The record gives the reactivity of an RNA of 177 nucleotides to 2A3 and DMS.
For 2A3 the reverse transcriptase was SuperScript II with manganese.

RNA sequence: GGGAACGACUCGAGUAGAGUCGAAAAGCGUACAUGGCGCAGGCGCGCAGCUAUGCGGACAACGUGCUCGCGCCGCUCGCGCAGGCGCCGAAUCCGCAGGACGGCGGCUUCGUCAACGUGCGGCUGACAUCACUGGCCUAUUCGUAGGCCAGUGAUGAAAAGAAACAACAACAACAAC
Reactivity to 2A3 in 0.01 (KOAc 150mM, MgCl2 10mM, bicine 150mM(pH8.5), 24C), signal-to-noise 2, nucleotides 027 to 126: g050c030g060u080a030c070a190u190g020g000c000g000c010a010g020g010c000g000c000g000c050a010g030c000u070a010u220g040c020g010g020a010c040a190a140c190g180u170g020c010u050c030g060c000g010c000c040g000c020u000c010g000c000g000c010a000g030g020c000g000c000c030g010a010a030u010c010c000g000c020a000g070g080a050c060g080g020c020g040g030c050u210u210c060g050u020c050a050a060c080g090u000g030c030g040g020c050u050g040a020
Reactivity to DMS in 0.01 (KOAc 150mM, MgCl2 10mM, bicine 150mM(pH8.5), 24C), signal-to-noise 3, nucleotides 027 to 126: g000c060g000u000a090c070a150u000g000g000c010g020c010a040g030g010c020g010c040g000c210a050g020c000u010a080u000g000c010g030g010a030c030a100a210c300g020u010g030c040u000c030g000c020g040c160c220g000c050u000c050g000c000g010c030a030g000g010c000g020c010c030g010a040a060u010c030c000g020c010a070g040g010a090c190g000g000c020g000g000c090u000u010c020g010u000c150a130a230c080g000u000g020c020g000g020c110u000g020a210